[RMDB]
RNA sequence: GGGAACGACUCGAGUAGAGUCGAAAAGAUAUGGACAAGGAGGUAUGGAGGUGGAGGGAGGAGUGAGCUCGGAAACGAGCUCCUCCUUUGAUCUCCACUCCCCACCCAUACCUCCUUGUCCUAAGUCGUCCAAACAAUAGUUCGCUAUUGUUUGGACAAAAGAAACAACAACAACAAC
Reactivity to DMS in 0.01 (KOAc 150mM, MgCl2 10mM, bicine 150mM(pH8.5), 24C), signal-to-noise 2, nucleotides 027 to 126: g000a080u000a300u010g010g000a000c020a020a000g010g010a040g020g000u000a020u000g000g020a130g020g000u000g000g010a050g010g020g010a000g040g030a020g010u020g030a010g040c000u010c010g000g000a030a110a220c020g000a000g000c010u000c000c000u000c000c000u010u020u000g000a070u010c010u000c000c010a000c020u000c060c030c000c080a300c110c010c000a010u000a000c000c000u000c000c000u010u000g000u000c010c010u000a010a060g020u000c100